Record summary:
Structure probing data (2A3) for a 207-nucleotide construct.

[RMDB]
RNA sequence: GGGAACGACUCGAGUAGAGUCGAAAAGAAAUUACGUUUCCUUUACACUUCUCAAACCGGCAUCAAGAGAAGCAAAGCAUCCCUCAUAUCCACGAUGGAGGGUGUCGUGGAGUAUACUGUACCAAAAAGAGCGAACACGGCUUCGGCCGUGUUCGAACAUUGACUCGCAGUUCGCUGCGAGUCAAUGAAAAGAAACAACAACAACAAC
Reactivity to 2A3 in 0.01 (KOAc 150mM, MgCl2 10mM, bicine 150mM(pH8.5), 24C), signal-to-noise 1, nucleotides 027 to 156: g030a060a170a000u220u110a010c020g010u050u050u000c020c000u010u020u020a020c030a000c010u040u000c010u010c010a080a120a090c040c040g160g000c030a040u050c080a140a070g020a010g010a000a030g000c080a000a030a000g000c000a010u060c050c020c000u050c010a080u100a050u120c040c000a010c040g000a010u010g070g130a070g010g070g010u020g000u000c010g010u000g000g000a010g010u020a040u030a090c160u080g130u180a060c030c020a000a050a110a000a050g140a050g050c000g000a000a010c000a000c060g000g030c040u040u060c190g090g000c030c000g010u000g010u000u000c000g000a000a000
Reactivities are given for positions 27 through 156. Conditions: 150 mM KOAc, 10 mM MgCl2 and 150 mM bicine (pH 8.5), 24 C. The data come from the RNA Mapping Database (RMDB), library M2RFPK.